[RMDB]
RNA sequence: GGGAACGACUCGAGUAGAGUCGAAAAGCCGAGGAUCCCGGAUGCCUUUGAAGUCGUUCCGGCCAAAGGUUGGGCAAUGCAAAAUGAGUGGAACAUACUAACCAAAUUAGGGGAGUAGAAUUAGGUACACUGCAGUCGUAUUCGUACGACUGCAGUGAAAAGAAACAACAACAACAAC
Reactivity to DMS in 0.01 (KOAc 150mM, MgCl2 10mM, bicine 150mM(pH8.5), 24C), signal-to-noise 3, nucleotides 027 to 126: g010c040c050g000a110g010g010a100u010c020c020c040g050g030a080u050g010c000c010u000u020u000g050a140a030g020u000c020g010u000u000c000c010g010g120c000c000a040a050a080g000g000u000u010g010g000g000c080a130a020u020g000c100a110a060a110a060u020g000a060g010u000g030g010a120a050c090a100u000a020c050u000a030a090c010c070a050a030a170u090u040a120g000g000g050g000a030g000u010a010g000a020a110u020u020a050g000g040u010a200
Reactivity to 2A3 in 0.01 (KOAc 150mM, MgCl2 10mM, bicine 150mM(pH8.5), 24C), signal-to-noise 2, nucleotides 027 to 126: g000c000c000g000a040g050g020a140u080c010c000c030g020g050a150u160g040c030c000u080u010u090g130a080a040g000u010c000g020u020u000c010c040g070g010c050c000a000a020a030g000g000u090u050g020g000g010c010a020a180u150g020c000a030a020a070a280u280g020a060g060u050g000g040a020a080c040a000u000a090c000u040a040a020c010c010a130a000a190u130u170a140g000g020g020g020a000g020u070a050g040a030a150u230u170a060g010g000u020a070

Conditions: 150 mM KOAc, 10 mM MgCl2 and 150 mM bicine (pH 8.5), 24 C. Chemical mapping of a 177-nucleotide RNA with DMS and 2A3. It was measured as part of the RMDB library OK1LIB. DMS adducts were read by reverse transcription with MarathonRT.